Chemical mapping of a 207-nucleotide RNA with 2A3. Values cover nucleotides 27 to 156. For 2A3 the reverse transcriptase was SuperScript II with manganese. The RNA was probed in 150 mM KOAc, 10 mM MgCl2 and 150 mM bicine (pH 8.5) at 24 C.
RNA sequence: GGGAACGACUCGAGUAGAGUCGAAAACACAAUUCUGUAAGCGAUGAGAAGCGUGUGGAAAAUUAGGGAAGGGCUACGGCUAUAAUCCUAAGAAAGCUUAUCUACAAGCGGAGGUAUUCUCAGAACGAAAACCAUUUGGCGUUCGCGCCAAAUGGAAGCUUGAUAACUCGUUCGCGAGUUAUCAAGCAAAAGAAACAACAACAACAAC
Reactivity to 2A3 in 0.01 (KOAc 150mM, MgCl2 10mM, bicine 150mM(pH8.5), 24C), signal-to-noise 2, nucleotides 027 to 156: c100a000c010a010a140u080u060c010u040g050u060a080a030g050c020g030a040u030g020a010g040a040a060g020c020g010u070g000u100g090g040a070a090a110a080u060u040a050g030g030g040a080a060g080g030g000c010u040a010c150g010g000c010u010a000u070a190a020u050c010c020u010a040a030g010a050a080a010g010c000u040u070a070u040c040u110a080c020a030a030g000c020g000g020a010g000g000u060a140u150u000c020u000c000a010g040a060a020c030g060a080a010a040a130c000c000a000u000u000u000g000g020c000g000u040u030c240g030c000g000c070c020a000a000a000u000g050g000a010a000